[RMDB]
RNA sequence: GGGAACGACUCGAGUAGAGUCGAAAACCGACUGCGCCUGCGGCAGAUAGUCGUGGCCGUCGAAAUUUUCGCCCGACAGGGCCACGAACAGCUCGCCGCGGCCGAUGCGGCGCGUAUCGGUCGACAAGACGCCUAUGGUGUUCGCACCAUAGGCGUCAAAAGAAACAACAACAACAAC
Reactivity to DMS in 0.01 (KOAc 150mM, MgCl2 10mM, bicine 150mM(pH8.5), 24C), signal-to-noise 1, nucleotides 027 to 126: c030c000g010a070c170u000g010c080g010c020c080u010g040c020g030g030c040a040g000a080u000a060g030u000c000g000u000g010g030c020c020g000u000c020g000a020a060a180u000u010u030u000c240g040c250c080c040g000a020c020a150g010g030g010c010c020a000c000g000a030a030c060a160g020c030u000c190g020c040c040g060c000g020g010c120c080g000a030u020g020c040g020g010c130g000c000g020u010a070u000c060g040g010u000c050g000a090c090a090a070